An RNA of 177 nucleotides, treated with 2A3 and DMS and read out base by base.
The RNA was probed in 150 mM KOAc, 10 mM MgCl2 and 150 mM bicine (pH 8.5) at 24 C.
Values are in units of 0.01, from 0 to 300, in steps of 10.
RNA sequence: GGGAACGACUCGAGUAGAGUCGAAAAGAUAUGGAGCAUGUGGAGACGUAGAGCGACGACGAAGCAUUAACUUCGGAAACGAAGUUAAUGCAGAGUCGCGAUCGUCGUUGAAACAUGCUCCUAAGUCGAUAUUUGAACGGUUCGCCGUUCAAAUAUCAAAAGAAACAACAACAACAAC
Reactivity to 2A3 in 0.01 (KOAc 150mM, MgCl2 10mM, bicine 150mM(pH8.5), 24C), signal-to-noise 1, nucleotides 027 to 126: g110a000u180a100u300g000g000a000g000c000a010u000g000u000g030g020a120g000a020c020g030u180a140g050a010g090c020g300a300c020g000a000c000g020a120a010g000c000a000u000u000a000a000c010u010u000c030g020g010a110a090a030c030g000a010a000g010u000u000a000a000u010g000c020a010g000a010g000u010c010g000c000g020a030u020c000g050u020c020g040u020u010g040a000a000a000c000a010u000g000c000u000c000c000u000a000a000g020u040c040
Reactivity to DMS in 0.01 (KOAc 150mM, MgCl2 10mM, bicine 150mM(pH8.5), 24C), signal-to-noise 3, nucleotides 027 to 126: g000a080u010a300u000g000g000a000g020c000a030u000g000u000g010g000a300g000a000c030g020u010a300g020a080g000c030g010a150c000g020a030c030g020a300a280g000c000a020u000u000a030a010c000u000u000c010g040g000a150a070a220c010g000a010a000g010u000u000a000a000u000g000c000a000g000a300g000u010c000g040c020g000a050u000c010g010u000c000g000u000u000g000a300a110a040c000a000u010g000c000u000c000c000u000a000a000g040u000c100

Background:
For 2A3, 3,715 sequencing reads were counted.